[RMDB]
RNA sequence: GGGAACGACUCGAGUAGAGUCGAAAAUACUUAGUACGCGCGUAGUUGCAGGCAUUCCGGGUGCAGCAACUGACGCGGAAGACUUUUCCCAGAGUGUGCGCUCCAACUGGCGUGCUGAGUAGUGCACGAAUUGCACGUACGUUCGCGUACGUGCAAAUAAUUCAUACCGGUUCGCCGGUAUGAAUUAAAAAGAAACAACAACAACAAC
Reactivity to DMS in 0.01 (KOAc 150mM, MgCl2 10mM, bicine 150mM(pH8.5), 24C), signal-to-noise 2, nucleotides 027 to 156: u010a050c060u010u000a040g040u000a050c040g040c010g020c000g030u000a020g020u000u000g000c020a130g010g000c010a040u000u010c010c300g000g070g110u000g000c000a300g010c000a020a020c010u000g020a030c020g020c020g000g000a040a120g020a090c100u000u000u000u000c010c020c030a170g000a070g010u000g020u000g020c020g010c020u010c050c060a080a110c040u040g010g020c050g040u000g010c010u000g030a090g000u000a030g040u000g010c010a040c030g000a120a210u000u000g010c000a020c010g040u000a000c000g030u000u000c300g030c020g030u000a010c010g000u010g000c000a000a010a010
Reactivity to 2A3 in 0.01 (KOAc 150mM, MgCl2 10mM, bicine 150mM(pH8.5), 24C), signal-to-noise 4, nucleotides 027 to 156: u130a000c000u000u010a000g010u020a010c000g000c000g010c000g040u010a010g010u010u000g000c050a090g100g000c010a020u090u070c090c240g260g020g000u000g000c020a020g000c000a010a010c020u130g140a020c020g000c000g000g010a000a010g090a050c040u220u140u030u010c000c000c000a000g010a010g020u060g000u010g010c000g000c000u010c030c040a300a300c100u010g010g010c000g010u000g000c010u000g000a000g000u030a010g010u010g020c020a000c040g020a040a090u030u010g010c000a000c010g000u000a000c000g010u010u060c160g010c000g100u000a000c010g000u000g000c000a010a000a000